[RMDB]
An RNA of 177 nucleotides, treated with 2A3 and DMS and read out base by base.
For DMS, 875 sequencing reads were counted.
DMS adducts were read by reverse transcription with MarathonRT.
The reactions ran in a buffer of 150 mM KOAc, 10 mM MgCl2 and 150 mM bicine (pH 8.5), at 24 C.
RNA sequence: GGGAACGACUCGAGUAGAGUCGAAAACCUCUAGUAUUCGUACUAGAGGCACAUGCCGCCCCAACGGCUUGCUGACGGGGCGGAUUCACUUUAAAUGGAGCAAAGCCGCUGUGUUCGCACAGCGGAACCCGAUAUGUACGUUCGCGUACAUAUCGGGAAAAGAAACAACAACAACAAC
Reactivity to 2A3 in 0.01 (KOAc 150mM, MgCl2 10mM, bicine 150mM(pH8.5), 24C), signal-to-noise 2, nucleotides 027 to 126: c030c000u000c000u010a000g000u000a030u030u050c240g060u040a000c000u000a000g010a010g020g010c020a030c000a080u160g060c010c000g000c040c000c000c020a080a000c000g000g020c050u030u130g040c010u000g000a020c050g010g010g000g020c020g000g010a010u100u070c010a020c020u040u090u140a090a170a130u190g100g000a100g030c060a000a110a060g050c000c010g000c000u010g000u010g060u050u070c180g030c110a020c000a010g020c020g000g010a000a010
Reactivity to DMS in 0.01 (KOAc 150mM, MgCl2 10mM, bicine 150mM(pH8.5), 24C), signal-to-noise 2, nucleotides 027 to 126: c000c000u000c010u000a000g000u000a010u010u020c160g020u000a000c000u040a030g000a010g030g000c030a030c170a090u000g000c010c000g000c000c120c000c000a020a300c030g030g020c060u000u000g020c010u010g010a100c300g000g010g020g030c010g000g000a000u000u010c070a090c100u000u000u000a010a050a250u000g010g000a070g020c150a010a110a120g010c010c000g040c000u000g060u000g000u020u000c190g020c040a000c000a030g000c000g000g000a050a010